[RMDB]
RNA sequence: GGGAACGACUCGAGUAGAGUCGAAAAUGUCUCAAGGUGCACUUUGACUCCUGAAGACCCUCCUUCUCCUCCUCUCACGGAUCUGCCGGUGUUCCCUCUCUGGAAGGCUUGCAGGAGAGACAGGAUCAUUACGAGACGAUUUCGAUCGUCUCGUAAUAAAAGAAACAACAACAACAAC
Reactivity to DMS in 0.01 (KOAc 150mM, MgCl2 10mM, bicine 150mM(pH8.5), 24C), signal-to-noise 3, nucleotides 027 to 126: u010g010u000c010u000c130a160a060g000g000u000g000c070a140c170u000u020u010g020a130c040u000c000c010u000g000a160a080g000a090c040c100c080u000c010c010u000u010c090u000c020c010u000c040c010u000c020u010c050a110c190g010g020a120u010c030u010g000c020c020g010g020u000g000u000u000c000c000c130u010c080u010c120u000g000g010a060a040g000g010c060u000u010g000c030a070g000g010a070g020a060g010a080c120a040g010g000a100u020c090
Reactivity to 2A3 in 0.01 (KOAc 150mM, MgCl2 10mM, bicine 150mM(pH8.5), 24C), signal-to-noise 1, nucleotides 027 to 126: u090g020u000c000u000c070a020a030g000g000u030g030c060a040c140u190u160u210g150a180c000u010c010c000u000g040a040a010g060a080c000c000c000u040c010c000u080u060c010u030c030c010u000c010c000u010c000u000c000a030c070g070g000a120u060c010u000g030c010c020g050g000u050g150u030u040c000c000c030u050c000u030c010u010g000g020a050a020g080g000c020u030u040g020c030a010g000g070a040g040a010g000a010c060a030g050g000a040u110c020